[RMDB]
RNA sequence: GGGAACGACUCGAGUAGAGUCGAAAAGCUUGGGGAAUGGUUUUGGUUUGAGAACCGAUGAAGGACGUGCCAAGCUGCGAUAUGCCUUGGGGAGGUGCAUGGAGCCAUUGAUCCAAGGAUUUCCGAAUGGUACUCUCUCAUUCGUGAGAGAGUACCAAAAAGAAACAACAACAACAAC
Reactivity to DMS in 0.01 (KOAc 150mM, MgCl2 10mM, bicine 150mM(pH8.5), 24C), signal-to-noise 4, nucleotides 027 to 126: g010c010u000u000g000g000g000g020a100a040u020g000g000u000u000u010u020g020g000u010u020u000g020a190g030a060a030c020c000g010a110u030g000a140a060g000g010a100c060g000u000g000c000c000a020a020g020c000u000g000c140g000a110u020a060u030g020c000c000u000u000g000g000g010g020a220g000g050u000g000c070a150u020g000g010a290g030c070c020a170u030u030g000a260u040c000c000a000a020g010g000a070u000u000u000c000c000g000a110a110
Reactivity to 2A3 in 0.01 (KOAc 150mM, MgCl2 10mM, bicine 150mM(pH8.5), 24C), signal-to-noise 2, nucleotides 027 to 126: g000c000u000u000g060g000g000g110a220a110u020g210g000u030u080u000u080g080g000u110u170u290g150a120g100a020a080c000c010g120a150u140g050a040a000g040g050a020c020g000u030g000c000c000a000a030g010c030u000g000c020g000a040u030a030u230g050c000c000u000u000g000g000g000g000a030g080g000u020g000c040a060u290g120g110a020g000c020c000a010u110u000g050a050u040c040c000a010a000g020g000a000u000u000u010c000c000g020a050a020